[RMDB]
RNA sequence: GGGAACGACUCGAGUAGAGUCGAAAAAGAACUGCAAACGAUAAUAAUCUCUAUGUAGGUGCUCCAGCUUUAGCUGCCGCUUAAUCCUACGAGGAUUGAAGGUGUGACGGGCAACAGACCCGGAAAAGGUAUGCGAGUAUUUCGAUACUCGCAUACCAAAAGAAACAACAACAACAAC
Reactivity to 2A3 in 0.01 (KOAc 150mM, MgCl2 10mM, bicine 150mM(pH8.5), 24C), signal-to-noise 2, nucleotides 027 to 126: a000g000a060a000c000u000g000c000a000a000a090c080g040a040u050a180a080u120a110a100u140c010u000c000u150a110u220g060u020a000g000g020u130g010c000u050c080c010a000g010c000u220u120u140a020g000c040u060g000c000c000g000c000u010u130a050a020u110c000c000u020a070c130g020a040g010g060a060u000u090g020a010a000g060g010u040g000u020g070a030c000g000g040g000c010a080a040c000a180g110a230c000c020c000g010g000a050a170a010a000
Reactivity to DMS in 0.01 (KOAc 150mM, MgCl2 10mM, bicine 150mM(pH8.5), 24C), signal-to-noise 3, nucleotides 027 to 126: a050g000a280a090c040u000g000c050a100a130a110c120g000a120u000a050a170u000a080a010u020c010u090c040u010a110u040g010u000a010g000g000u030g000c040u010c300c030a020g020c020u000u080u000a140g020c020u000g020c150c070g050c080u040u010a070a080u020c020c000u040a030c090g020a050g000g020a050u020u020g000a130a070g000g010u000g020u000g000a240c010g030g010g000c030a100a090c170a150g000a100c010c010c020g020g020a020a170a050a080